Notes:
The record gives the reactivity of an RNA of 207 nucleotides to 2A3 and DMS. The RNA was probed in 150 mM KOAc, 10 mM MgCl2 and 150 mM bicine (pH 8.5) at 24 C. For 2A3 the reverse transcriptase was SuperScript II with manganese. For DMS the reverse transcriptase was MarathonRT.
RNA sequence: GGGAACGACUCGAGUAGAGUCGAAAACAGAGCUAAUGAGCCACAUACCUACCCAAGGUGUAAGCUCCUUCUCUCGCAAUGUGUAACUCAUGAUUCUCAUGACCCCUGGUUGGAGAGAUCCGGACUAUAGACUAGAGGGUGUUCGCACCCUCUAGAAGACAUUAGAAAUCUUCGGAUUUCUAAUGUCAAAAGAAACAACAACAACAAC
Reactivity to 2A3 in 0.01 (KOAc 150mM, MgCl2 10mM, bicine 150mM(pH8.5), 24C), signal-to-noise 4, nucleotides 027 to 156: c040a000g050a010g050c020u100a100a130u180g090a040g010c030c020a040c020a040u140a060c000c000u020a060c010c000c030a040a050g000g000u020g020u030a060a030g030c010u010c010c000u040u020c010u010c000u000c040g080c130a050a050u060g080u020g020u120a080a050c020u010c020a010u030g050a180u300u050c110u050c080a020u040g020a050c010c020c000c040u100g100g000u060u070g040g000a020g000a000g000a030u040c070c040g010g000a010c030u070a060u110a290g070a090c000u000a000g000a000g000g010g010u000g010u020u020c070g000c040a000c000c000c000u000c000u000a010g000a000a000
Reactivity to DMS in 0.01 (KOAc 150mM, MgCl2 10mM, bicine 150mM(pH8.5), 24C), signal-to-noise 3, nucleotides 027 to 156: c070a070g000a090g020c060u020a080a100u010g010a030g020c020c030a140c090a110u010a050c030c020u010a160c030c060c100a190a080g020g010u000g010u000a140a130g000c020u010c020c060u010u000c020u000c010u000c040g020c060a080a050u000g040u000g010u000a040a060c030u000c000a060u000g000a110u010u000c080u010c020a080u000g000a160c050c010c030c030u000g020g030u000u000g000g000a110g000a100g000a080u000c000c040g000g010a120c080u000a080u000a120g020a210c010u000a010g010a040g010g020g020u000g000u000u010c260g040c020a030c000c000c010u000c020u000a010g000a020a130